[RMDB]
The record gives the reactivity of an RNA of 207 nucleotides to DMS and 2A3. For DMS the reverse transcriptase was MarathonRT. Conditions: 150 mM KOAc, 10 mM MgCl2 and 150 mM bicine (pH 8.5), 24 C.
RNA sequence: GGGAACGACUCGAGUAGAGUCGAAAAUAGAUUAUUUUCCACAAAAAAUCAGUUACAUAUGUAUCUUAACAUGUUGUAUUAUUGUUUAACCUUGUUUAUUGAAUAACUAACAUGUAGAAAAGUAUUUAUAGCAUAAGUAUACAGCUGUAUACAGCUCUGUAGUACAAGACUUCGGUCUUGUACUACAAAAAGAAACAACAACAACAAC
Reactivity to DMS in 0.01 (KOAc 150mM, MgCl2 10mM, bicine 150mM(pH8.5), 24C), signal-to-noise 1, nucleotides 027 to 156: u000a170g000a100u010u010a070u010u000u000u000c000c020a210c070a020a000a040a150a150a130u030c050a070g000u000u000a050c040a180u000a080u010g030u010a130u000c050u010u000a140a110c020a060u010g000u010u000g020u000a120u000u000a010u000u000g000u000u000u000a060a010c040c180u010u010g010u020u000u000a000u000u000g000a080a070u000a040a040c050u000a010a010c020a040u000g000u010a060g000a060a030a110a180g010u000a000u010u000u000a020u020a170g010c010a300u010a040a040g000u000a070u000a080c040a100g010c060u000g040u000a060u010a090c050a070g000c100u000c080
Reactivity to 2A3 in 0.01 (KOAc 150mM, MgCl2 10mM, bicine 150mM(pH8.5), 24C), signal-to-noise 1, nucleotides 027 to 156: u050a000g080a020u020u010a020u000u250u040u000c030c000a010c030a070a040a110a080a080a050u280c070a020g050u170u170a020c020a000u150a020u140g010u070a080u010c040u140u160a150a000c000a000u000g090u010u030g040u050a080u050u000a020u000u140g120u160u060u060a000a030c050c050u080u030g000u100u070u030a070u040u080g030a050a020u020a010a000c060u000a000a000c000a000u050g010u130a070g000a070a080a000a000g000u050a030u110u110u090a290u180a030g000c000a000u030a230a000g000u030a070u030a020c000a000g030c010u150g000u000a020u000a050c000a000g090c000u010c060
2A3 adducts were read by reverse transcription with SuperScript II with manganese. The DMS profile rests on 1,512 reads. For 2A3, 496 sequencing reads were counted.